[RMDB]
RNA sequence: GGGAACGACUCGAGUAGAGUCGAAAAGCGUACUACUCAACGAGGCACAAGAGGAUGGGCCAAGCAUCCCAAAUAGGAUGCUUGACCAUCUACCCACCUUGUGCUACCCACCGUUGAGUAUCGCAAACCCCUGGAUGGCUUCGGCCAUCCAGGGGAAACACAGACAAGUGUUCGCACUUGUCUGUGUAAAAGAAACAACAACAACAAC
Reactivity to 2A3 in 0.01 (KOAc 150mM, MgCl2 10mM, bicine 150mM(pH8.5), 24C), signal-to-noise 1, nucleotides 027 to 156: g000c000g040u060a080c030u020a000c000u000c000a000a000c000g000a010g000g050c000a000c000a010a000g030a010g060g000a000u000g050g020g000c130c080a050a000g010c000a000u050c040c030c050a130a300a020u300a070g000g000a000u000g020c000u000u000g000a000c010c000a000u000c020u040a020c060c070c010a080c000c000u000u000g010u000g000c000u030a010c010c020c010a100c000c010g000u020u000g010a010g000u010a000u040c010g000c020a060a110a300c010c000c000c000u000g030g000a000u010g000g000c030u050u050c300g140g010c000c000a000u030c000c000a000g000g000g000g000a000a000

Background
Structure probing data (2A3) for a 207-nucleotide construct. Conditions: 150 mM KOAc, 10 mM MgCl2 and 150 mM bicine (pH 8.5), 24 C. Reactivities are given for positions 27 through 156. The data come from the RNA Mapping Database (RMDB), library RNAMAK. High 2A3 reactivity points to a flexible backbone, as in loops and unpaired stretches.